[RMDB]
RNA sequence: GGGAACGACUCGAGUAGAGUCGAAAAACCUUUGUGUAGCUCUAAGUAGACAACAGCCCACGCGUAACAUCGAGACCCAUUGGGUCUCGUGGCGUGGGACAUGUCUACGAAGAGCUACACUCUGGUAAAGAAUGAUGAUCUUCGGAUCAUCAUUCAAUCUGCACUAUUGCUUCGGCAAUAGUGCAGAAAAAGAAACAACAACAACAAC
Reactivity to 2A3 in 0.01 (KOAc 150mM, MgCl2 10mM, bicine 150mM(pH8.5), 24C), signal-to-noise 1, nucleotides 027 to 156: a010c000c000u000u020u010g000u000g000u010a000g000c000u000c000u010a040a080g000u000a000g000a000c020a120a020c040a130g020c000c000c000a010c010g000c000g130u150a130a080c090a170u220c080g000a000g000a000c000c030c050a250u280u300g020g010g000u000c030u050c000g000u000g040g000c000g000u000g000g060g000a000c010a000u000g000u000c000u000a000c000g000a010a000g010a000g000c000u000a000c000a000c000u000c010u000g000g030u050a080a060a030g000a000a000u010g000a000u000g000a000u000c000u020u070c260g100g000a000u010c000a010u000c000a000u000u000c000a000a020